[RMDB]
Structure probing data (2A3 and DMS) for a 177-nucleotide construct. For DMS, 2,904 sequencing reads were counted.
RNA sequence: GGGAACGACUCGAGUAGAGUCGAAAAGAAGUCCGACACGCUGUCGCGGGGCGAUUUAGCACCUUUCCCGGGAAAGGACCCGGUGAGAUUUACGCACAUUUAUUAGAUCAGUGCCGAUCUAAAGAAAGAUAAUAAUAAUCUUCGGAUUAUUAUUAUCAAAAGAAACAACAACAACAAC
Reactivity to 2A3 in 0.01 (KOAc 150mM, MgCl2 10mM, bicine 150mM(pH8.5), 24C), signal-to-noise 3, nucleotides 027 to 126: g060a090a010g070u060c020c020g040a050c050a020c090g060c070u100g010u120c030g000c040g050g020g040g000c020g000a010u060u070u170a030g000c020a100c030c000u000u050u070c000c000c010g020g030g010a160a160a050g200g000a020c000c020c000g020g010u050g020a050g000a000u050u050u150a050c040g090c020a020c010a080u030u160u220a110u090u120a080g030a030u020c030a030g050u050g250c060c030g000a010u000c010u040a000a070a030g030a040a120a030
Reactivity to DMS in 0.01 (KOAc 150mM, MgCl2 10mM, bicine 150mM(pH8.5), 24C), signal-to-noise 4, nucleotides 027 to 126: g010a150a150g010u010c030c010g030a100c070a080c080g020c110u000g000u010c080g040c160g010g020g010g020c020g010a060u000u000u000a090g010c040a120c040c020u000u000u000c070c010c020g000g010g000a060a100a110g010g010a170c020c020c010g010g030u000g010a070g020a080u000u010u010a080c090g010c060a090c110a080u000u000u000a120u030u000a030g000a040u000c030a130g000u010g030c100c090g000a010u010c010u010a020a060a220g000a120a090a100
The RNA was probed in 150 mM KOAc, 10 mM MgCl2 and 150 mM bicine (pH 8.5) at 24 C. DMS adducts were read by reverse transcription with MarathonRT. 2A3 adducts were read by reverse transcription with SuperScript II with manganese. The 2A3 profile rests on 2,555 reads.